[RMDB]
RNA sequence: GGGAACGACUCGAGUAGAGUCGAAAACGAGGGGUGGGCGAAAGUUGCCAUGAGACCGUAACUUUCGUAGUCAUUGAUAAAGGGGCAGGUCUCGCUCUUUUGUCAUUGCGGGUGCCUAGAGGCAUGGAAAACCAUGACAGGUUCGCCUGUCAUGGAACUAGGUCCGUAUCUUCGGAUACGGACCUAGAAAAGAAACAACAACAACAAC
Reactivity to 2A3 in 0.01 (KOAc 150mM, MgCl2 10mM, bicine 150mM(pH8.5), 24C), signal-to-noise 1, nucleotides 027 to 156: c140g040a130g000g030g030g050u180g050g010g050c010g010a000a010a000g000u000u000g060c000c020a080u180g120a090g030a090c010c060g000u010a000a000c000u000u000u000c010g000u000a020g030u040c020a030u000u060g000a010u030a020a000a000g000g000g010g040c010a010g050g080u080c050u050c080g000c000u040c010u000u000u000u060g000u000c020a020u000u020g010c100g000g040g000u040g020c000c000u090a090g020a190g040g080c070a030u050g040g020a090a020a010a070c000c000a000u000g000a000c000a000g040g060u060u050c210g060c060c000u000g010u000c000a000u000g000g000a010a040

The record gives the reactivity of an RNA of 207 nucleotides to 2A3. 2A3 adducts were read by reverse transcription with SuperScript II with manganese. It was measured as part of the RMDB library M2RFPK.